[RMDB]
This 177-nucleotide RNA was probed chemically with DMS and 2A3.
For DMS the reverse transcriptase was MarathonRT.
Source: RMDB library OK2TRN, as collected in RNAgym.
RNA sequence: GGGAACGACUCGAGUAGAGUCGAAAAAGCUAGGGAUCGCGUACCUGAUCACUGAUCAUACUAGCACACAUGAGCGUACGAUAUGUGUCAUAGCUAGCUCAGUACCGCACAUGGAUCUCAUGAGUCGUAGUAUACCAAAUUUCGAUUUGGUAUACUAAAAAGAAACAACAACAACAAC
Reactivity to DMS in 0.01 (KOAc 150mM, MgCl2 10mM, bicine 150mM(pH8.5), 24C), signal-to-noise 9, nucleotides 027 to 126: a080g000c020u000a030g010g010g000a020u000c030g010c100g020u010a090c130c100u010g010a080u010c060a070c070u010g010a030u000c020a100u010a140c020u000a030g010c030a110c120a090c030a030u000g000a060g020c080g020u000a040c060g000a090u000a050u010g010u000g000u000c230a090u010a150g000c020u000a090g010c160u000c050a090g010u000a040c070c090g030c040a080c050a050u000g010g000a100u000c010u010c010a090u000g000a040g010u000c040g010
Reactivity to 2A3 in 0.01 (KOAc 150mM, MgCl2 10mM, bicine 150mM(pH8.5), 24C), signal-to-noise 9, nucleotides 027 to 126: a000g020c020u030a010g030g020g020a020u030c030g010c060g120u070a080c020c080u090g070a100u120c060a040c140u110g010a020u020c020a030u070a220c020u020a000g010c010a010c000a000c000a050u050g020a030g060c030g030u060a020c040g030a050u020a040u240g050u010g040u050c040a040u050a070g010c030u020a020g020c020u020c040a010g010u020a020c060c100g050c010a010c010a050u050g070g010a060u010c010u010c030a060u180g040a010g050u040c030g020